[RMDB]
RNA sequence: GGGAACGACUCGAGUAGAGUCGAAAAACAGGAGCGCAUGCAGGUGGUCGCCGAGGGCCGGACUGCUGCGGAGGAAACGGCCGCGAAGGCGCGGGCGGCGGCCGAGUUGGCCCGACGCGAACUGGCCCAAAGGGGUCAAAUUCGUUUGACCCCUUUGAAAAGAAACAACAACAACAAC
Reactivity to DMS in 0.01 (KOAc 150mM, MgCl2 10mM, bicine 150mM(pH8.5), 24C), signal-to-noise 7, nucleotides 027 to 126: a130c080a090g000g000a120g000c050g010c060a040u020g000c050a070g000g020u000g000g010u010c020g000c020c020g000a280g000g000g030c010c010g000g010a140c050u010g000c040u010g010c020g000g000a140g000g000a070a110a240c040g000g010c000c010g020c030g010a150a140g000g010c020g010c030g000g000g010c030g010g010c010g000g000c010c050g000a060g010u010u010g000g000c010c000c010g000a300c300g000c000g010a060a070c020u010g000g010c010c020
Reactivity to 2A3 in 0.01 (KOAc 150mM, MgCl2 10mM, bicine 150mM(pH8.5), 24C), signal-to-noise 4, nucleotides 027 to 126: a000c050a030g060g020a060g030c020g000c040a030u140g010c030a020g040g040u050g020g010u030c000g030c030c010g010a100g000g020g030c000c010g070g020a070c040u060g030c010u030g010c040g040g070a080g030g050a090a130a020c010g050g010c070c020g000c020g030a070a110g120g030c040g000c020g010g030g000c020g040g000c000g000g000c000c010g010a050g050u070u090g040g000c010c000c000g000a010c000g010c000g010a050a060c010u050g050g000c000c000
Chemical mapping of a 177-nucleotide RNA with DMS and 2A3. Reactivities are given for positions 27 through 126. The reactions ran in a buffer of 150 mM KOAc, 10 mM MgCl2 and 150 mM bicine (pH 8.5), at 24 C. 2A3 adducts were read by reverse transcription with SuperScript II with manganese. It was measured as part of the RMDB library OK1LIB.